The record gives the reactivity of an RNA of 177 nucleotides to 2A3 and DMS. For 2A3 the reverse transcriptase was SuperScript II with manganese. The 2A3 profile rests on 11,694 reads.
[RMDB]
RNA sequence: GGGAACGACUCGAGUAGAGUCGAAAAGAUAUGGAGUCGUCCCACGAGCUCUGGGUCGGAAACGACCCUGAGCGAUGAGUGGCGACUCCUAAGUCAAAACACGCUAUUCAGUUCGCUGAAUAGCGUGCGAUGUAGUCCAGUUCGCUGGACUACAUCGAAAAGAAACAACAACAACAAC
Reactivity to 2A3 in 0.01 (KOAc 150mM, MgCl2 10mM, bicine 150mM(pH8.5), 24C), signal-to-noise 2, nucleotides 027 to 126: g000a000u010a000u060g000g020a000g000u000c000g030u160c030c030c000a000c010g130a070g030c000u040c030u040g010g000g000u010c000g010g000a010a020a000c010g010a010c000c040c010u000g000a010g020c000g000a160u110g050a000g000u010g000g010c000g010a000c000u000c000c000u000a010a000g000u000c000a000a030a010a110c010a010c000g000c000u000a000u000u000c010a010g100u060u190c280g090c180u010g010a000a000u000a000g000c020g000u000g010
Reactivity to DMS in 0.01 (KOAc 150mM, MgCl2 10mM, bicine 150mM(pH8.5), 24C), signal-to-noise 4, nucleotides 027 to 126: g010a010u000a040u010g000g010a010g000u000c000g000u020c230c130c060a040c030g010a050g010c000u000c000u010g010g000g030u000c000g030g000a020a010a030c010g000a010c000c010c000u000g000a010g020c000g010a030u010g030a300g020u000g000g000c000g000a010c000u000c000c000u000a000a090g000u000c000a160a100a120a300c000a000c000g010c000u000a000u000u000c000a010g010u000u010c290g030c000u000g010a020a000u000a000g010c000g010u000g000
Conditions: 150 mM KOAc, 10 mM MgCl2 and 150 mM bicine (pH 8.5), 24 C. The data come from the RNA Mapping Database (RMDB), library TTRDES. Values are in units of 0.01, from 0 to 300, in steps of 10.